[RMDB]
RNA sequence: GGGAACGACUCGAGUAGAGUCGAAAACGUAGCUACGAUCGCGAUAUCGUAUAGCGCGCUAUAGCAUAUUAAUUAGCUAUAGCAUAUUAUAGCAUGCGCCGUACGAUCGCGGCCGCGAUGCGCAUGCCAGUAACUGAGCCUUCGGGCUCAGUUACUGAAAAGAAACAACAACAACAAC
Reactivity to DMS in 0.01 (KOAc 150mM, MgCl2 10mM, bicine 150mM(pH8.5), 24C), signal-to-noise 1, nucleotides 027 to 126: c080g000u000a060g000c060u000a050c020g000a000u000c010g000c030g000a020u020a070u010c010g000u010a010u000a080g040c010g020c040g020c030u000a000u000a020g050c020a090u010a240u020u020a110a110u000u010a100g010c020u000a010u000a010g000c020a050u010a040u010u000a160u000a170g000c130a070u000g010c000g040c000c070g010u010a030c040g000a000u000c020g010c020g020g000c050c010g020c130g010a060u010g000c030g030c050a050u010g000c010
Reactivity to 2A3 in 0.01 (KOAc 150mM, MgCl2 10mM, bicine 150mM(pH8.5), 24C), signal-to-noise 2, nucleotides 027 to 126: c000g020u020a050g000c040u060a020c020g020a020u030c010g000c030g030a060u050a060u150c020g030u040a020u010a030g010c010g000c020g010c000u000a000u010a010g000c020a050u050a100u270u300a250a170u160u160a080g010c020u010a010u000a000g010c000a000u050a000u000u080a140u070a030g100c120a070u230g000c010g000c010c020g010u050a030c020g000a020u010c000g000c000g000g020c020c020g010c050g060a100u120g000c010g000c000a020u090g050c050
Structure probing data (DMS and 2A3) for a 177-nucleotide construct.
DMS adducts were read by reverse transcription with MarathonRT.
The reactions ran in a buffer of 150 mM KOAc, 10 mM MgCl2 and 150 mM bicine (pH 8.5), at 24 C.
It was measured as part of the RMDB library OK2TRN.